[RMDB]
RNA sequence: GGGAACGACUCGAGUAGAGUCGAAAAUCAUACUGGAUAGUAGACAUUGGGUGUCACGGUCUCUACUAUCUAGUAUGAGCACCACAGGUAGACUAGACUGUGAUACCCAAUGUCUAUCUGUGGUGUAGUAUCACGUAGUAUUCGUACUAUGUGAUACAAAAGAAACAACAACAACAAC
Reactivity to DMS in 0.01 (KOAc 150mM, MgCl2 10mM, bicine 150mM(pH8.5), 24C), signal-to-noise 8, nucleotides 027 to 126: u030c030a060u020a020c030u000g010g000a040u010a030g010u010a010g000a010c010a000u000u010g000g010g020u000g010u010c010a020c000g010g010u000c010u000c080u000a060c000u000a010u000c010u010a050g030u010a020u020g010a100g010c060a040c060c020a030c030a010g000g000u000a000g000a150c300u020a070g010a030c010u000g010u000g000a050u030a010c000c000c000a010a000u000g000u000c000u000a000u020c020u000g010u010g000g010u010g000u010a100
Reactivity to 2A3 in 0.01 (KOAc 150mM, MgCl2 10mM, bicine 150mM(pH8.5), 24C), signal-to-noise 8, nucleotides 027 to 126: u110c010a010u020a030c010u020g020g000a010u010a010g010u000a000g000a010c010a020u000u010g010g000g000u100g070u100c020a000c010g010g000u000c000u000c000u020a060c000u000a000u000c000u000a000g000u000a010u020g000a010g010c010a010c010c000a010c000a000g000g010u000a000g000a060c070u020a020g010a010c020u020g010u010g040a050u060a020c000c000c000a000a010u020g000u000c000u000a000u000c000u000g010u000g010g010u020g010u020a030